[RMDB]
RNA sequence: GGGAACGACUCGAGUAGAGUCGAAAAUGUUACUCUGUUGCAACAAGCAUUGGCUGACAGGCGUCGUAUUGUGAUUGUCGGUGAUUUUGAUGCUGAUGGCGCAACCAGUACCGCGUUGGCAGUGCUCUGGCAUAAUAAUAUUCGUAUUAUUAUGCCAAAAAGAAACAACAACAACAAC
Reactivity to DMS in 0.01 (KOAc 150mM, MgCl2 10mM, bicine 150mM(pH8.5), 24C), signal-to-noise 9, nucleotides 027 to 126: u010g010u000u000a070c060u000c090u000g010u000u000g010c040a060a140c100a110a060g010c020a020u000u010g020g030c020u000g000a040c040a140g010g010c050g010u000c110g010u010a180u000u000g010u000g000a090u000u000g020u000c010g010g010u000g000a140u000u010u010u010g020a080u010g010c010u000g010a070u000g010g010c130g000c020a020a030c130c180a120g010u000a040c030c030g010c120g010u000u000g010g010c020a050g010u000g000c040u000c160
Reactivity to 2A3 in 0.01 (KOAc 150mM, MgCl2 10mM, bicine 150mM(pH8.5), 24C), signal-to-noise 6, nucleotides 027 to 126: u080g010u020u050a060c020u050c050u130g060u130u080g050c060a050a040c010a110a000g010c010a020u020u080g220g000c020u030g030a020c010a020g050g100c020g040u100c040g020u080a070u100u120g040u030g130a300u070u070g020u050c040g020g050u060g080a130u020u150u180u280g080a080u220g020c010u030g020a040u040g030g020c010g000c010a000a030c020c010a010g010u030a030c000c000g020c030g030u040u030g040g000c020a010g030u040g010c000u020c060